Structure probing data (2A3 and DMS) for a 177-nucleotide construct. For DMS, 12,426 sequencing reads were counted. The 2A3 profile rests on 5,617 reads. The reactions ran in a buffer of 150 mM KOAc, 10 mM MgCl2 and 150 mM bicine (pH 8.5), at 24 C.
RNA sequence: GGGAACGACUCGAGUAGAGUCGAAAAGAUUAGGCAGAUAACAACUAUUACGCGUCUUGCCACUGUUUUGUAAAGUAAACAACAAGAUAUAAGUUUAAUACACCUACGCGACAAGAUGAAUCAGCAAAACGAGAGUAUAAUUCGUUAUACUCUCGUUAAAAGAAACAACAACAACAAC
Reactivity to 2A3 in 0.01 (KOAc 150mM, MgCl2 10mM, bicine 150mM(pH8.5), 24C), signal-to-noise 4, nucleotides 027 to 126: g060a040u090u140a030g040g000c060a030g060a140u070a130a080c050a020a020c040u060a080u180u170a070c070g010c020g030u000c010u000u020g010c010c010a020c040u010g050u010u020u040u040g110u080a090a110a110g050u030a020a010a020c020a070a020c010a040a000g020a020u050a020u030a170a050g010u020u020u040a130a050u090a020c010a010c020c010u030a020c040g000c020g020a040c010a050a000g020a080u090g030a050a110u160c030a030g010c030a020a150
Reactivity to DMS in 0.01 (KOAc 150mM, MgCl2 10mM, bicine 150mM(pH8.5), 24C), signal-to-noise 9, nucleotides 027 to 126: g000a110u000u000a050g020g010c040a060g000a090u010a060a090c120a050a070c070u000a080u000u000a090c140g010c070g010u000c010u000u000g010c040c050a120c150u000g010u000u000u000u000g010u010a070a100a160g000u010a010a010a020c020a030a110c060a030a030g010a050u010a080u000a080a080g000u000u000u000a050a060u010a070c140a050c050c020u000a030c090g010c030g020a050c070a050a040g010a050u000g010a060a070u010c050a060g010c140a060a040